Notes
This 177-nucleotide RNA was probed chemically with DMS and 2A3. It was measured as part of the RMDB library OK2TST. The RNA was probed in 150 mM KOAc, 10 mM MgCl2 and 150 mM bicine (pH 8.5) at 24 C. For DMS, 15,484 sequencing reads were counted. DMS adducts were read by reverse transcription with MarathonRT.
RNA sequence: GGGAACGACUCGAGUAGAGUCGAAAACUUCUUGAAAUCAUUCAUUCCUCCAUCCAUUCACUGUGGCUAGCUUCCCUGGAGGACCAGCGGGGGUUCCGUGCUGGCCCAUUUCCUGCCCUUUGGGAAGACAAAAGAAUGAGUUCGCUCAUUCUUUUGUAAAAGAAACAACAACAACAAC
Reactivity to DMS in 0.01 (KOAc 150mM, MgCl2 10mM, bicine 150mM(pH8.5), 24C), signal-to-noise 6, nucleotides 027 to 126: c120u010u000c040u010u000g010a080a090a100u010c080a080u000u000c070a130u010u000c020c010u000c030c030a060u000c030c030a060u000u000c120a080c120u010g010u000g010g010c090u010a080g000c050u000u000c010c010c000u000g000g010a110g010g010a040c040c010a020g000c030g010g010g010g020g000u010u010c040c020g020u000g020c020u000g010g010c020c010c010a110u000u010u000c010c020u000g010c040c020c040u000u000u000g000g000g000a080a060g000
Reactivity to 2A3 in 0.01 (KOAc 150mM, MgCl2 10mM, bicine 150mM(pH8.5), 24C), signal-to-noise 4, nucleotides 027 to 126: c020u070u070c000u060u110g080a080a070a120u120c030a080u170u080c010a020u080u050c020c010u000c000c000a050u000c030c000a040u080u110c020a020c110u080g020u040g100g000c030u030a050g020c010u040u050c020c000c000u010g030g040a080g010g020a030c010c010a010g010c020g000g020g040g000g040u210u080c020c020g080u050g010c000u030g020g060c000c000c000a010u040u040u050c020c000u040g040c000c010c020u050u060u100g040g000g010a030a020g040